RNA sequence: GGGAACGACUCGAGUAGAGUCGAAAAGUGUUACUCUUUUGUUGGUCAACAUUUCCAGGAUAUUCCUCAAUGUGCCUUGGGGGAUAACUUGUGGGGGAGGGUCACAGUGCCCGCUGUGGAGGAGUGGUGCUGAAAUGCUGUUCGCAGCAUUUCAGCAAAAAGAAACAACAACAACAAC
Reactivity to DMS in 0.01 (KOAc 150mM, MgCl2 10mM, bicine 150mM(pH8.5), 24C), signal-to-noise 1, nucleotides 027 to 126: g010u000g000u000u000a080c070u000c030u010u000u010u000g020u020u000g030g000u010c140a040a050c060a050u010u020u020c070c000a100g020g000a110u000a030u000u000c000c000u000c020a010a030u000g020u010g020c200c090u000u000g010g000g000g020g000a020u000a010a070c050u010u000g020u010g050g000g010g000g000a130g010g020g000u000c030a030c050a030g000u000g010c030c000c010g010c040u000g000u000g000g020a110g000g000a150g020u000g000g030